RNA sequence: GGGAACGACUCGAGUAGAGUCGAAAAACACCAACUUGUGACCCAUGUGGGAGCACCAAGGUGAUGGAACAUGGCUGGUUUGCUUAGCGGGUUGGGCUGUAGGGUACACUAUGCUGGCCUGCCCACUUUAAUCCAACCCUUUCGAGGGUUGGAUUAAAAAAGAAACAACAACAACAAC
Reactivity to DMS in 0.01 (KOAc 150mM, MgCl2 10mM, bicine 150mM(pH8.5), 24C), signal-to-noise 2, nucleotides 027 to 126: a100c110a050c030c020a060a140c110u050u000g020u020g000a120c060c010c010a110u030g000u040g000g040g000a240g020c040a090c080c090a090a060g020g010u010g000a060u030g010g000a080a110c080a030u000g000g020c040u030g030g000u020u020u030g060c040u000u030a070g010c050g030g010g000u010u000g020g020g010c040u000g020u000a060g030g010g010u020a070c160a080c030u030a050u020g010c160u000g000g000c000c010u000g000c000c000c010a060c070u010
Reactivity to 2A3 in 0.01 (KOAc 150mM, MgCl2 10mM, bicine 150mM(pH8.5), 24C), signal-to-noise 2, nucleotides 027 to 126: a000c000a000c020c000a000a020c060u040u070g020u100g060a050c000c010c000a140u240g070u250g030g040g020a060g070c020a010c010c050a140a020g020g000u010g000a050u090g010g050a040a040c010a020u070g150g000c040u050g060g060u060u090u080g060c040u040u000a000g020c020g080g000g050u100u220g070g000g000c020u080g010u070a020g080g020g060u220a000c150a000c090u120a080u150g110c050u040g000g100c000c000u010g000c000c000c000a000c000u000